[RMDB]
Notes:
An RNA of 177 nucleotides, treated with DMS and 2A3 and read out base by base. The DMS profile rests on 4,740 reads. The RNA was probed in 150 mM KOAc, 10 mM MgCl2 and 150 mM bicine (pH 8.5) at 24 C.

RNA sequence: GGGAACGACUCGAGUAGAGUCGAAAAUUUCGCCGAAACCUGCCUAGAGUCCCUGUGCAGGCGGCUCUGGCUCGUCGAUAGGUUCGCCGGCCCCCUGGAUCCCGGGAGGCUACCGGAUCGCAUCCGCUGUAAGAGCAAGAUUCGUCUUGCUCUUACAAAAAGAAACAACAACAACAAC
Reactivity to DMS in 0.01 (KOAc 150mM, MgCl2 10mM, bicine 150mM(pH8.5), 24C), signal-to-noise 4, nucleotides 027 to 126: u000u000u010c060g010c100c010g020a110a150a090c060c070u000g000c020c010u010a030g000a050g000u000c000c010c010u000g010u020g030c220a030g000g020c220g010g000c010u000c020u000g000g000c020u010c060g010u000c040g000a100u010a080g020g010u000u000c020g030c130c050g000g000c010c010c000c000c010u010g020g010a140u000c100c030c060g010g010g000a070g010g020c040u010a050c290c020g000g010a030u010c040g000c160a300u000c010c060g030c210
Reactivity to 2A3 in 0.01 (KOAc 150mM, MgCl2 10mM, bicine 150mM(pH8.5), 24C), signal-to-noise 2, nucleotides 027 to 126: u020u030u050c030g030c050c010g000a090a070a020c060c040u070g010c010c080u090a040g020a000g040u020c020c010c020u070g140u220g110c230a030g010g050c050g000g000c010u000c000u010g010g000c000u000c060g050u010c020g050a050u060a070g070g000u040u000c020g000c030c040g010g000c000c000c000c000c000u020g050g080a140u110c020c010c000g000g000g010a030g020g010c020u030a040c040c000g010g000a030u040c030g000c040a040u020c030c020g020c090
It was measured as part of the RMDB library OK2TST. Values are in units of 0.01, from 0 to 300, in steps of 10.